[RMDB]
RNA sequence: GGGAACGACUCGAGUAGAGUCGAAAACGCGCUCGGCCGCCUGCGGGCUCUUCUGCUGCAUGUUCCUGCACGCCUUCGUGCACUGGCCCGACCGCCCCAUGGACAAGAACCCCACCAUGAACUUGCUGACGGGGGUGCCCAACGGCAUGCUCCAGUCGAAUAGUCUCUGAUUCGUCAGAGACUAUUCAAAAGAAACAACAACAACAAC
Reactivity to 2A3 in 0.01 (KOAc 150mM, MgCl2 10mM, bicine 150mM(pH8.5), 24C), signal-to-noise 2, nucleotides 027 to 156: c070g030c020g030c030u030c030g040g060c020c060g020c000c000u070g050c100g020g050g020c040u060c010u160u030c020u020g060c000u010g000c020a030u060g050u010u070c010c000u010g010c030a020c040g020c020c110u230u300c120g000u050g000c020a040c100u070g030g000c010c020c030g040a100c050c010g020c020c000c000c000a020u040g020g000a050c040a100a120g030a120a200c010c030c010c000a050c000c010a000u050g000a000a040c010u070u070g020c080u110g040a090c000g000g000g000g000g000u010g000c000c000c000a040a020c060g020g000c000a010u050g020c000u000c020c010a040g010u050c020

An RNA of 207 nucleotides, treated with 2A3 and read out base by base.